The record gives the reactivity of an RNA of 207 nucleotides to 2A3. Values are in units of 0.01, from 0 to 300, in steps of 10. The RNA was probed in 150 mM KOAc, 10 mM MgCl2 and 150 mM bicine (pH 8.5) at 24 C. 2A3 adducts were read by reverse transcription with SuperScript II with manganese.

RNA sequence: GGGAACGACUCGAGUAGAGUCGAAAAGCGUGACCCAUGGAAGUGUGUGGGGAGGAGAACUUAGGCGCCUUUUGCGCAGGCAUAUCCGCAAAACUCUUAGGAAAUGCGUUUUCUACUGUGUCACGUGGCAUGAUGUUGAUAGAUUUUUGCGGCUCGCGAUCACAAUUCGCUUCGGCGAAUUGUGGUCAAAAGAAACAACAACAACAAC
Reactivity to 2A3 in 0.01 (KOAc 150mM, MgCl2 10mM, bicine 150mM(pH8.5), 24C), signal-to-noise 1, nucleotides 027 to 156: g070c030g000u030g020a060c000c000c000a010u010g050g050a070a090g010u030g020u000g000u100g060g020g000g000a030g040g010a060g000a080a000c060u120u090a090g110g000c090g020c040c000u090u050u120u270g000c050g020c060a010g010g050c030a060u050a100u130c010c000g000c000a000a000a040a080c040u030c040u090u090a050g040g040a020a040a070u080g030c060g090u120u020u000u000c010u050a080c030u030g010u000g020u060c010a050c140g040u090g020g000c040a060u060g040a050u050g030u090u030g030a070u080a090g000a020u030u030u010u000u050g000c000g000g020c020u030c040g050c050